[RMDB]
RNA sequence: GGGAACGACUCGAGUAGAGUCGAAAAUUUACCGGCACGGCUUUCAUUUUCAAUGACCCAGCUCAAUGUCUCAGCAUCAUGUGUCUUAUCUGAGCUUGAAAUGCUUCUGUUUCCAAAUGAGUUGGAACAACUACCUACGAUUCGUCGUAGGUAGUUGAAAAGAAACAACAACAACAAC
Reactivity to 2A3 in 0.01 (KOAc 150mM, MgCl2 10mM, bicine 150mM(pH8.5), 24C), signal-to-noise 9, nucleotides 027 to 126: u080u070u070a090c010c000g020g020c040a020c020g060g020c040u060u110u070c050a110u060u060u100u120c090a100a120u140g040a070c000c000c010a010g010c010u010c020a050a080u080g090u050c010u000c040a030g020c020a050u050c030a040u130g060u040g060u110c020u090u100a120u030c030u050g010a010g020c000u020u030g070a060a090a060u110g020c020u030u060c020u040g040u020u020u000c010c000a030a060a130u200g020a100g090u020u010g020g000a010a010
Reactivity to DMS in 0.01 (KOAc 150mM, MgCl2 10mM, bicine 150mM(pH8.5), 24C), signal-to-noise 3, nucleotides 027 to 126: u030u030u040a040c030c030g020g000c030a080c050g010g000c020u010u000u010c020a070u040u010u010u040c080a100a090u010g020a110c070c020c000a070g000c040u000c020a060a070u020g010u020c020u010c030a020g000c110a050u020c040a050u010g010u030g000u030c040u020u010a070u020c030u000g000a020g000c010u000u000g010a050a040a060u020g020c040u000u000c060u010g020u000u000u000c000c030a030a050a150u030g000a140g020u000u020g000g010a070a150